RNA sequence: GGGAACGACUCGAGUAGAGUCGAAAACGCUCACCAUCAGGAGGUCUGGACUUGGCUGUGAAAGACACAGGCCCUCAUGUACGUCCAGGAUGCGGUGACAGCGAGGCUUGCAGGAGACAGGUCCCUGCUGAGAAAGCGAAUUCGUUCGCUUUCUCAGAAAAGAAACAACAACAACAAC
Reactivity to DMS in 0.01 (KOAc 150mM, MgCl2 10mM, bicine 150mM(pH8.5), 24C), signal-to-noise 3, nucleotides 027 to 126: c040g000c040u000c020a070c050c010a090u010c100a080g010g010a090g000g010u000c010u000g000g010a040c030u000u000g000g010c010u010g010u000g000a140a100a100g010a210c030a050c020a060g000g010c020c010c110u010c110a100u010g010u010a080c150g020u010c030c010a100g000g000a050u000g010c140g010g010u000g000a090c100a040g000c020g010a100g010g000c060u010u000g010c020a060g000g020a130g010a060c070a090g010g000u000c030c000c000u000g010
Reactivity to 2A3 in 0.01 (KOAc 150mM, MgCl2 10mM, bicine 150mM(pH8.5), 24C), signal-to-noise 3, nucleotides 027 to 126: c020g020c020u020c010a050c020c010a080u120c100a050g160g080a050g040g170u040c000u020g010g030a020c020u090u110g040g010c000u000g010u010g090a240a130a050g140a030c030a010c000a060g300g080c010c010c000u110c030a080u170g070u080a050c120g010u000c000c010a030g060g010a040u080g090c080g030g020u020g030a030c020a010g000c000g010a040g000g000c020u010u070g000c050a050g010g130a040g050a080c070a040g020g030u030c000c000c000u020g010